[RMDB]
RNA sequence: GGGAACGACUCGAGUAGAGUCGAAAAGCUCGCACUGUUGCAGGCGUGUCCAUACUUAGCACAAUGACUAAUCGCCAGUACCAUCAGAAAAUGCUUAAGUCCAUGGCUGCAACUCGUGGAGCGACUUAAAUCAGGUCGUUCGCGACCUGAAAAAGAAACAACAACAACAAC
Reactivity to DMS in 0.01 (KOAc 150mM, MgCl2 10mM, bicine 150mM(pH8.5), 24C), signal-to-noise 4, nucleotides 027 to 129: g050c090u040c030g060c010a040c030u050g020u000u110g010c020a030g000g000c020g090u050g000u130c100c160a180u050a090c020u060u000a020g030c030a000c100a080a140u080g060a000c110u030a140a110u050c000g030c040c050a120g030u040a050c050c110a130u080c050a040g000a000a080a210a140u020g020c000u080u050a050a060g030u010c130c000a030u030g080g040c020u000g020c000a040a000c050u000c160g090u000g010g050a030g070c020g020a030c070u070u030a090a080a070
Reactivity to 2A3 in 0.01 (KOAc 150mM, MgCl2 10mM, bicine 150mM(pH8.5), 24C), signal-to-noise 5, nucleotides 027 to 129: g010c010u000c030g210c030a010c020u020g020u000u000g010c010a010g050g000c020g000u010g030u030c060c000a030u080a110c000u000u060a000g000c000a010c010a080a230u130g040a070c010u090a130a060u120c060g050c050c000a030g020u020a070c020c010a030u060c000a000g180a070a090a040a010u090g010c020u180u150a020a000g000u000c020c020a020u020g050g030c000u000g000c010a000a000c000u030c110g000u000g010g000a000g000c000g000a000c000u030u060a050a060a060